Annotation
An RNA of 177 nucleotides, treated with DMS and 2A3 and read out base by base. DMS adducts were read by reverse transcription with MarathonRT. For DMS, 1,326 sequencing reads were counted. The reactions ran in a buffer of 150 mM KOAc, 10 mM MgCl2 and 150 mM bicine (pH 8.5), at 24 C. The data come from the RNA Mapping Database (RMDB), library RFM100.

RNA sequence: GGGAACGACUCGAGUAGAGUCGAAAAGUUAGCUUAGAAGCAGCUAUCCUUUAAAGAGUGCGUAACAGCUCACUCACCGAGGUUAUUUGCCUCCAAGAUGGAAGAGGCUAAAGCCAGUUACCGAUACAAUCCGAAGUACCUUCGGGUACUUCGGAUUAAAAGAAACAACAACAACAAC
Reactivity to DMS in 0.01 (KOAc 150mM, MgCl2 10mM, bicine 150mM(pH8.5), 24C), signal-to-noise 2, nucleotides 027 to 126: g000u000u000a030g020c000u000u020a050g010a110a130g040c140a090g000c080u000a040u000c220c000u000u000u000a200a170a090g000a020g000u010g000c040g000u000a020a160c300a300g000c020u000c060a100c010u000c000a070c220c130g000a050g000g010u000u050a100u010u070u100g020c000c020u000c000c040a130a060g050a080u050g040g000a140a120g010a040g010g000c000u010a000a070a010g000c000c080a210g000u030u010a000c050c090g000a100u060a100c260
Reactivity to 2A3 in 0.01 (KOAc 150mM, MgCl2 10mM, bicine 150mM(pH8.5), 24C), signal-to-noise 2, nucleotides 027 to 126: g040u030u010a040g000c010u060u050a020g070a120a000g160c020a000g000c000u010a060u010c020c000u000u040u060a030a090a160g080a030g010u010g060c030g000u040a170a080c010a050g000c000u000c010a000c020u040c000a070c000c030g090a100g080g000u050u030a160u200u060u030g020c000c030u020c000c000a050a110g030a200u170g120g020a120a000g000a050g030g000c000u060a050a050a030g000c000c000a070g030u150u050a070c000c070g000a000u020a110c060